Structure probing data (2A3 and DMS) for a 177-nucleotide construct.
RNA sequence: GGGAACGACUCGAGUAGAGUCGAAAAUGAGAAGCAUUCGUGCUUCUCAGAAAUCCUGCCCAAAGAGGACCUGGGGGUGUCUGGGCUGCUAAACUCAUCAGCUAACCGCGAUCUUCGGAUCGCGGAAGCAACUAUUCCAUUUCGAUGGAAUAGUUGCAAAAGAAACAACAACAACAAC
Reactivity to 2A3 in 0.01 (KOAc 150mM, MgCl2 10mM, bicine 150mM(pH8.5), 24C), signal-to-noise 1, nucleotides 027 to 126: u030g000a000g000a020a010g000c020a010u050u140c200g090u020g010c000u010u000c000u000c000a000g000a000a100a010u040c000c010u030g030c000c000c000a110a140a060g200a090g110g000a040c040c080u140g050g020g000g040g000u010g000u020c050u010g000g050g000c030u040g010c030u130a070a040a090c040u050c060a170u070c050a090g030c030u070a110a070c000c010g000c000g010a000u010c000u070u080c200g090g000a010u010c000g030c000g000g010a000a000
Reactivity to DMS in 0.01 (KOAc 150mM, MgCl2 10mM, bicine 150mM(pH8.5), 24C), signal-to-noise 2, nucleotides 027 to 126: u000g010a020g020a000a000g000c000a040u000u010c190g010u000g020c000u000u000c000u000c010a010g000a100a100a100u000c010c010u010g020c020c020c020a060a130a160g020a170g000g000a030c060c010u000g020g000g000g000g020u010g000u020c050u000g020g000g010c010u000g000c130u010a040a080a070c120u010c100a090u010c040a040g010c040u020a090a140c030c000g000c010g000a010u000c000u000u010c270g050g010a000u000c010g020c020g000g000a010a060
Source information
Values are in units of 0.01, from 0 to 300, in steps of 10.